[RMDB]
Structure probing data (2A3 and DMS) for a 177-nucleotide construct. The RNA was probed in 150 mM KOAc, 10 mM MgCl2 and 150 mM bicine (pH 8.5) at 24 C. 2A3 adducts were read by reverse transcription with SuperScript II with manganese. The DMS profile rests on 2,295 reads. DMS adducts were read by reverse transcription with MarathonRT.
RNA sequence: GGGAACGACUCGAGUAGAGUCGAAAAUUUUAAUGCAUUUUCUACUGACAUAAACUUAAGUCCAACUAUUUGGAAACUUUAUUUGUAAAGCGCUCUUUGAUCUCAAUGCUGUCUGGCUGGACAUUUGCAAAAUAAUUCCGUUCGCGGAAUUAUUUUGAAAAGAAACAACAACAACAAC
Reactivity to 2A3 in 0.01 (KOAc 150mM, MgCl2 10mM, bicine 150mM(pH8.5), 24C), signal-to-noise 4, nucleotides 027 to 126: u070u070u050u120a070a040u140g010c010a030u030u030u030u040c020u060a120c050u020g060a050c020a080u160a070a160a020c030u120u070a050a010g020u020c010c000a030a060c080u130a210u180u100u060g000g020a090a070a020c010u070u110u060a080u100u120u030g070u110a050a080a030g040c020g010c010u010c010u070u090u130g090a120u030c010u020c040a090a060u100g000c010u000g050u020c010u010g070g040c020u040g000g010a010c020a070u090u100u060g020
Reactivity to DMS in 0.01 (KOAc 150mM, MgCl2 10mM, bicine 150mM(pH8.5), 24C), signal-to-noise 2, nucleotides 027 to 126: u010u000u020u050a130a120u040g010c040a020u010u010u010u000c040u040a110c070u020g020a070c060a110u030a110a070a070c070u010u010a040a010g000u020c020c080a020a140c140u020a090u040u010u010g010g000a050a080a070c020u000u000u010a020u030u020u010g020u040a050a070a080g000c070g000c020u000c000u000u000u000g000a080u030c030u000c020a080a070u000g010c060u020g000u000c040u000g000g010c080u010g000g010a050c150a020u000u030u000g010